RNA sequence: GGGAACGACUCGAGUAGAGUCGAAAACUACGAGCGCACCCAGCUUGAGCCCCUCAUGGUGGUCAAGCGGGACGGGCGCAAGGAGCCCUUCAACCCCGACAAGCUCCUAAGGGGCCUCCUCCUCGCCUGCGAGAAGCGCCCCGUGAGCGAGGAGGUCGCAUAUUAACGAGUUCGCUCGUUAAUAUGCAAAAGAAACAACAACAACAAC
Reactivity to 2A3 in 0.01 (KOAc 150mM, MgCl2 10mM, bicine 150mM(pH8.5), 24C), signal-to-noise 2, nucleotides 027 to 156: c010u100a060c030g020a040g030c010g020c000a060c020c020c030a030g000c010u020u080g050a100g210c010c020c000c020u230c090a200u280g000g020u120g010g040u040c010a030a000g020c030g000g000g000a010c080g020g070g000c000g000c020a010a010g040g030a020g010c020c040c000u100u120c050a070a100c020c000c000c000g050a030c040a040a060g000c010u000c010c020u040a080a080g010g010g000g010c000c010u000c000c000u010c000c000u000c020g010c000c030u050g000c020g020a070g090a210a030g140c030g100c050c030c000c000g020u000g010a030g010c060g000a010g000g010a000g020g000u000c040
Annotation:
Structure probing data (2A3) for a 207-nucleotide construct. Values cover nucleotides 27 to 156. Conditions: 150 mM KOAc, 10 mM MgCl2 and 150 mM bicine (pH 8.5), 24 C. The 2A3 profile rests on 1,311 reads.